Notes: The record gives the reactivity of an RNA of 177 nucleotides to 2A3 and DMS. For DMS the reverse transcriptase was MarathonRT. It was measured as part of the RMDB library TTRDEL. Conditions: 150 mM KOAc, 10 mM MgCl2 and 150 mM bicine (pH 8.5), 24 C.
RNA sequence: GGGAACGACUCGAGUAGAGUCGAAAAGAUAUGGAGUAAGGCGCAUAUGGAGGCAUGUUCGGAAACGAACAUGUGAAGUAUGAACUACGCUAUCUCCUAAGUCAAAAGGAUUGGUUCGCCAAUCCAACAUCGUACGGUUGUUCGCAACCGUACGAUGAAAAGAAACAACAACAACAAC
Reactivity to 2A3 in 0.01 (KOAc 150mM, MgCl2 10mM, bicine 150mM(pH8.5), 24C), signal-to-noise 2, nucleotides 027 to 126: g010a030u090a030u120g040g000a020g040u100a300a270g100g000c030g000c010a010u040a000u100g070g010a050g000g260c010a000u020g000u000u020c000g010g010a020a040a040c000g010a000a020c000a010u020g030u130g020a010a000g000u020a000u050g030a100a090c080u150a050c160g000c030u020a120u070c000u020c010c000u020a130a030g050u030c010a050a040a110a120g010g000a010u000u020g080g000u050u140c250g000c100c030a010a000u000c020c000a000a000
Reactivity to DMS in 0.01 (KOAc 150mM, MgCl2 10mM, bicine 150mM(pH8.5), 24C), signal-to-noise 2, nucleotides 027 to 126: g040a020u000a300u010g010g000a030g040u000a120a140g010g010c030g040c020a000u000a030u000g020g000a300g010g000c000a000u000g010u000u000c000g020g000a060a130a210c000g010a010a000c000a000u000g000u010g010a230a230g030u000a010u010g000a110a070c030u000a260c050g000c000u000a300u010c000u000c000c000u000a010a060g010u000c020a080a100a060a170g000g010a000u000u010g000g000u000u010c290g030c000c020a040a000u000c010c000a070a110